An RNA of 177 nucleotides, treated with DMS and 2A3 and read out base by base. The reactions ran in a buffer of 150 mM KOAc, 10 mM MgCl2 and 150 mM bicine (pH 8.5), at 24 C.

RNA sequence: GGGAACGACUCGAGUAGAGUCGAAAACACUUGGUUGACCUGAUGAUCACUUUCGUCGCUAAGGUAAACCCCAGCAUGAGCGACAGAAUCGGUUAGUUCAGCACGAACACAGUAGUCGCGAGUGACCACCACGAGCUGACUUCGGUCAGCUCGUGGUAAAAGAAACAACAACAACAAC
Reactivity to DMS in 0.01 (KOAc 150mM, MgCl2 10mM, bicine 150mM(pH8.5), 24C), signal-to-noise 1, nucleotides 027 to 126: c010a100c030u000u010g000g010u020u010g000a040c020c130u000g080a080u000g000a190u000c300a080c130u020u000u000c130g010u000c000g000c040u010a070a040g000g010u000a000a120a210c080c080c000c020a140g020c060a100u000g000a300g040c000g010a050c020a070g000a020a080u000c030g000g050u000u000a030g020u000u000c050a080g000c030a130c130g010a060a050c090a130c070a040g000u000a060g010u010c010g000c090g020a130g000u000g010a130c030c190
Reactivity to 2A3 in 0.01 (KOAc 150mM, MgCl2 10mM, bicine 150mM(pH8.5), 24C), signal-to-noise 1, nucleotides 027 to 126: c060a000c030u040u010g130g000u100u300g020a030c000c090u070g100a080u080g030a060u210c050a080c220u060u120u060c000g000u000c020g000c050u010a070a000g080g010u040a090a040a060c030c000c000c000a000g000c000a020u010g000a020g020c000g010a000c000a020g100a100a040u100c030g060g030u020u180a050g000u000u130c060a090g090c130a080c180g010a030a010c000a030c010a050g100u090a010g000u060c030g030c010g000a010g000u030g000a060c000c010